[RMDB]
RNA sequence: GGGAACGACUCGAGUAGAGUCGAAAACAUUGCCUUCUCGCGUGCCUGUGCAUUGAGAAAUCCACCAUAACGCCGAUGCCAGUAAAAUUGAUGGUUUUGUGCGCGUAAUACACUCUGAAUCGCAAUGAGCUGUAAGAGAAUUCGUUCUCUUACAGCUAAAAGAAACAACAACAACAAC
Reactivity to 2A3 in 0.01 (KOAc 150mM, MgCl2 10mM, bicine 150mM(pH8.5), 24C), signal-to-noise 9, nucleotides 027 to 126: c010a030u040u090g040c010c010u030u040c030u030c030g040c020g030u030g020c010c020u080g040u110g030c030a040u060u080g040a040g060a130a070a030u040c030c010a040c010c020a070u060a180a050c060g020c040c020g020a020u040g010c010c010a050g060u180a020a090a130a140u160u210g070a080u070g050g030u040u050u090u060g080u040g000c050g000c000g020u010a060a010u080a100c050a010c040u060c010u030g040a050a050u060c030g010c040a020a090u100g030
Reactivity to DMS in 0.01 (KOAc 150mM, MgCl2 10mM, bicine 150mM(pH8.5), 24C), signal-to-noise 7, nucleotides 027 to 126: c060a050u000u000g010c020c030u000u000c020u000c040g020c160g030u000g010c070c070u010g020u000g010c080a050u010u010g010a120g010a050a060a080u010c050c020a060c050c070a070u010a070a090c090g010c040c040g010a060u000g010c020c010a050g010u010a070a040a090a140u000u000g010a080u000g010g010u000u000u010u010g010u000g010c030g020c050g010u000a060a070u010a090c090a050c040u000c040u000g000a050a050u010c120g000c040a060a070u000g000

The record gives the reactivity of an RNA of 177 nucleotides to 2A3 and DMS. The RNA was probed in 150 mM KOAc, 10 mM MgCl2 and 150 mM bicine (pH 8.5) at 24 C. For DMS, 10,956 sequencing reads were counted. DMS adducts were read by reverse transcription with MarathonRT. Values cover nucleotides 27 to 126.